[RMDB]
RNA sequence: GGGAACGACUCGAGUAGAGUCGAAAAGCGGGGCUUGAAACGCGGGUAGCGCGCACGCCCGGCGAAGAAGUUGGCAUACGCGGUGUGCUGGUGCCGAAGUGUCUGCUGCAACGGCACGCUCGACACCUAGAACAUACCGUAUUCGUACGGUAUGUAACGUGGGAAUAUCUUUCGAGAUAUUCCCACGAAAAGAAACAACAACAACAAC
Reactivity to 2A3 in 0.01 (KOAc 150mM, MgCl2 10mM, bicine 150mM(pH8.5), 24C), signal-to-noise 2, nucleotides 027 to 156: g010c070g020g010g040g000c020u070u020g040a090a130a070c130g000c080g030g050g070u250a160g030c030g000c000g010c030a010c010g020c010c000c000g040g050c070g000a030a030g040a070a030g040u050u030g010g020c130a050u060a060c100g040c040g180g000u020g000u040g030c090u070g000g000u020g020c000c000g000a080a040g050u070g050u080c110u100g010c080u150g000c070a070a000c000g000g010c000a000c040g030c070u020c010g040a010c000a010c030c000u040a080g050a040a000c000a000u000a000c000c000g010u010a010u020u110c130g010u010a000c000g000g040u000a000u010g020u030a010a010
Reactivity to DMS in 0.01 (KOAc 150mM, MgCl2 10mM, bicine 150mM(pH8.5), 24C), signal-to-noise 1, nucleotides 027 to 156: g000c030g040g010g040g040c040u000u010g000a120a090a030c020g000c020g010g020g010u000a210g030c010g010c000g000c040a140c130g000c020c000c010g010g000c000g000a070a270g000a080a190g010u000u000g010g000c010a060u020a070c040g010c030g000g000u010g020u020g020c010u000g020g030u000g030c000c020g000a000a140g010u020g020u000c080u000g040c070u000g010c190a110a280c130g000g010c020a060c000g020c060u010c000g000a080c020a020c000c000u000a100g010a120a040c020a030u000a000c020c000g000u000a020u000u000c270g020u000a020c010g000g000u000a010u000g010u010a010a110